The record gives the reactivity of an RNA of 207 nucleotides to 2A3 and DMS.
2A3 adducts were read by reverse transcription with SuperScript II with manganese.
It was measured as part of the RMDB library M2RFPK.
The RNA was probed in 150 mM KOAc, 10 mM MgCl2 and 150 mM bicine (pH 8.5) at 24 C.
RNA sequence: GGGAACGACUCGAGUAGAGUCGAAAAGAUCGGAAACAGCAGCAGGUGAGUCCGCCUUAUGUGAAGGAUCGGCUGAAACACGAGAAAAUACUGAGCCAACGCAAGACGGUAGCCGAACAGUAGCAACAAAACGCUUACGUGUUCGCACGUAAGCGAACUAAUUUCAAACCUUCGGGUUUGAAAUUAGAAAAGAAACAACAACAACAAC
Reactivity to 2A3 in 0.01 (KOAc 150mM, MgCl2 10mM, bicine 150mM(pH8.5), 24C), signal-to-noise 5, nucleotides 027 to 156: g040a040u070c040g020g030a070a050a030c020a050g050c010a000g040c010a010g000g060u040g050a040g040u030c030c010g040c020c030u120u120a170u130g060u050g060a060a010g030g010a060u060c030g020g000c020u060g030a080a070a020c070a020c090g070a080g100a050a110a010a020u130a050c060u060g010a000g020c010c010a040a020c050g010c030a020a050g040a030c040g030g030u040a020g020c020c020g010a010a010c010a020g030u070a010g050c040a010a050c010a060a100a030a030c020g010c000u000u000a010c000g000u000g020u050u070c190g000c080a000c020g000u000a000a000g000c000g010a000a000
Reactivity to DMS in 0.01 (KOAc 150mM, MgCl2 10mM, bicine 150mM(pH8.5), 24C), signal-to-noise 2, nucleotides 027 to 156: g030a080u000c060g040g000a100a080a100c040a100g010c050a070g070c060a060g000g040u000g040a130g040u000c020c050g040c000c030u010u020a090u000g000u000g010a110a180g020g010a050u010c030g020g020c020u000g020a120a030a070c130a130c080g000a140g000a070a050a130a120u000a070c050u000g010a090g000c030c000a020a170c080g000c030a040a050g040a110c020g030g000u000a080g020c050c010g030a070a050c040a050g000u000a060g010c040a040a120c030a030a060a050a070c020g030c000u000u000a040c000g040u000g000u000u000c280g050c000a010c020g000u010a000a030g030c000g000a000a030